[RMDB]
RNA sequence: GGGAACGACUCGAGUAGAGUCGAAAAGCUCUAUCCUUCGGGAUAGAGCAAACGCUACGAUUGACGGUGAAGCCGGACCUGAGGUUCAGCAAAGUCGGGCUAAAAGUCACAUGUUCGCAUGUGACAACGAGUAAUGCUUCUUCGGAAGCAUUACUCGAAAAGAAACAACAACAACAAC
Reactivity to DMS in 0.01 (KOAc 150mM, MgCl2 10mM, bicine 150mM(pH8.5), 24C), signal-to-noise 2, nucleotides 027 to 126: g010c000u000c010u000a020u000c000c000u000u010c240g050g010g020a000u000a020g000a000g010c000a010a020a090c160g010c090u000a070c070g030a110u000u010g020a140c080g000g020u020g000a130a160g010c000c050g010g040a020c030c010u000g020a280g030g000u000u010c060a080g010c070a070a110a080g000u000c020g000g000g010c050u000a020a050a050a090g000u020c000a000c000a010u000g030u010u000c190g030c020a000u000g020u000g000a010c000a060a060
Reactivity to 2A3 in 0.01 (KOAc 150mM, MgCl2 10mM, bicine 150mM(pH8.5), 24C), signal-to-noise 1, nucleotides 027 to 126: g000c000u000c000u000a010u020c000c020u010u050c140g120g000g000a000u000a000g000a000g000c000a000a000a000c040g020c010u180a080c030g070a060u050u060g160a040c080g030g120u070g080a040a000g030c040c010g070g050a080c030c020u120g070a090g050g020u040u100c020a000g040c030a070a000a040g070u060c010g020g000g000c000u080a090a050a020a170g000u000c000a000c000a000u020g030u060u060c210g000c110a000u000g000u000g010a000c000a010a030
This 177-nucleotide RNA was probed chemically with DMS and 2A3. Source: RMDB library M2PK50, as collected in RNAgym. For 2A3, 1,411 sequencing reads were counted. For 2A3 the reverse transcriptase was SuperScript II with manganese. The reactions ran in a buffer of 150 mM KOAc, 10 mM MgCl2 and 150 mM bicine (pH 8.5), at 24 C.